Structure probing data (DMS and 2A3) for a 207-nucleotide construct. 2A3 adducts were read by reverse transcription with SuperScript II with manganese. The RNA was probed in 150 mM KOAc, 10 mM MgCl2 and 150 mM bicine (pH 8.5) at 24 C. Source: RMDB library OK3TST, as collected in RNAgym. For 2A3, 3,800 sequencing reads were counted.

[RMDB]
RNA sequence: GGGAACGACUCGAGUAGAGUCGAAAAGAUUAUGUGGGAGAUGCGCCCAGUCGUGUCACUGGAAACAGAAUUGCGAGUCGCUCGCGCUAGCGAUAUUGAUGUGUACAGUAGCGUACACUGUGCUACUUUAAGGUAUGAUGACGAUACCACGUCAAAAGAUUAGUCAUGCUUUCGAGCAUGACUAAUCAAAAGAAACAACAACAACAAC
Reactivity to DMS in 0.01 (KOAc 150mM, MgCl2 10mM, bicine 150mM(pH8.5), 24C), signal-to-noise 3, nucleotides 027 to 156: g010a160u000u000a050u010g010u000g000g040g020a090g020a060u010g030c050g020c090c020c050a110g000u010c030g030u010g000u010c030a100c040u000g030g010a150a090a250c050a100g000a070a110u000u000g010c000g010a080g040u010c030g000c020u000c020g010c100g000c070u000a060g000c020g010a080u000a070u010u010g000a080u000g030u000g000u010a070c050a120g010u000a040g020c040g010u000a120c020a010c020u010g020u010g010c020u000a060c080u000u000u000a070a110g010g000u000a050u000g000a090u010g030a080c040g010a130u000a090c020c020a100c060g020u000c010a030a070a120a210
Reactivity to 2A3 in 0.01 (KOAc 150mM, MgCl2 10mM, bicine 150mM(pH8.5), 24C), signal-to-noise 5, nucleotides 027 to 156: g040a020u130u170a080u190g050u100g020g010g010a100g010a050u060g020c030g010c020c010c030a010g030u050c070g030u040g070u190c030a010c060u020g030g000a080a060a060c070a040g100a140a100u120u160g020c030g010a020g040u010c000g030c040u010c010g080c020g010c060u020a010g000c010g000a010u030a070u070u150g050a050u090g030u010g010u010a030c020a040g060u070a040g070c040g040u030a040c030a010c030u050g050u060g030c000u000a050c020u060u080u140a090a030g030g000u070a040u090g090a070u070g010a020c040g000a000u030a040c010c030a040c030g050u010c000a030a030a000a010